[RMDB]
RNA sequence: GGGAACGACUCGAGUAGAGUCGAAAACGUGCCUUCAUGCUAAGGGUUUGAUAUCUGCUAAAACACGGUGCAUUCAUCAAUGCAGGUUAAGCCAAAGGGAUGUCCCGACCGGAGGCCGACAAUCCAGAUAGCUCAAGAAUGUUCGCAUUCUUGAGAACGUUGUAAGGACCUUCGGGUCCUUACAACGAAAAGAAACAACAACAACAAC
Reactivity to DMS in 0.01 (KOAc 150mM, MgCl2 10mM, bicine 150mM(pH8.5), 24C), signal-to-noise 1, nucleotides 027 to 156: c030g010u010g060c010c000u000u000c000a180u000g030c070u010a110a230g000g000g050u000u000u010g000a050u000a020u000c000u000g030c000u010a150a070a090a090c050a170c110g000g000u000g000c050a060u020u000c030a010u000c040a020a130u010g020c080a010g070g040u000u000a060a080g010c030c050a080a240a200g000g010g030a150u020g020u000c000c000c020g000a110c080c070g020g000a290g010g000c000c020g020a010c050a020a130u000c020c050a210g010a230u000a160g010c030u000c000a000a020g010a040a000u000g000u000u000c300g030c040a020u000u000c000u000u000g000a000g020a040a060
Reactivity to 2A3 in 0.01 (KOAc 150mM, MgCl2 10mM, bicine 150mM(pH8.5), 24C), signal-to-noise 2, nucleotides 027 to 156: c030g020u130g000c020c000u020u010c020a090u200g050c060u190a060a090g080g010g030u080u060u090g040a010u030a030u180c000u020g000c030u100a090a060a070a090c080a060c090g070g050u040g060c040a070u020u250c020a020u090c000a020a250u070g000c020a000g020g050u000u020a020a000g000c000c000a040a020a010g030g000g010a050u110g110u120c000c000c050g030a020c000c020g050g000a010g020g000c010c000g000a010c020a050a050u010c030c000a030g070a200u160a050g020c000u000c000a000a000g010a000a000u010g020u030u040c100g030c100a000u030u000c000u000u000g000a000g000a000a000